[RMDB]
RNA sequence: GGGAACGACUCGAGUAGAGUCGAAAAUUAUACUUCGGUAUAAACAAGGCGUACUACGUUAAGACAGCAGACCGUACGUUGAAAGAAUCCCAAAUAGGAUUCUGGAGUACGGAGAACUGCAAUGACGACGUAUCGCAUAGUGCUUUUUCGAAAGCAAUGAAAAUGAAAAUUUCGAUUUUCAUUUUCAAAAAGAAACAACAACAACAAC
Reactivity to DMS in 0.01 (KOAc 150mM, MgCl2 10mM, bicine 150mM(pH8.5), 24C), signal-to-noise 2, nucleotides 027 to 156: u000u010a030u040a000c000u000u000c250g000g060u000a040u000a020a020a100c060a110a150g040g000c030g080u000a110c100u010a080c020g040u000u000a300a210g020a300c010a030g000c000a050g060a300c000c000g000u000a000c030g010u000u000g000a240a300a050g000a020a030u030c000c000c010a110a120a290u010a130g030g000a000u010u000c000u000g000g010a130g020u000a050c020g010g000a030g050a110a000c020u000g000c020a070a100u000g020a070c080g010a060c120g000u000a020u000c040g000c050a100u010a090g020u000g000c030u000u000u040u000u000c110g050a140a060a110g020c030a110a220
Reactivity to 2A3 in 0.01 (KOAc 150mM, MgCl2 10mM, bicine 150mM(pH8.5), 24C), signal-to-noise 2, nucleotides 027 to 156: u020u000a030u000a000c010u040u010c160g140g000u040a020u020a000a090a030c100a120a100g090g000c000g050u060a060c030u010a010c000g020u020u040a070a010g140a080c060a090g160c030a030g090a100c010c000g000u000a010c000g100u110u040g020a000a020a000g010a000a000u070c010c010c000a180a170a060u210a110g000g020a000u000u010c000u000g000g000a020g010u000a010c000g020g010a000g040a080a070c000u000g020c020a070a100u080g010a000c040g000a000c010g000u000a020u300c010g000c020a000u080a040g110u100g000c000u050u030u080u020u030c160g150a060a000a000g030c070a020a030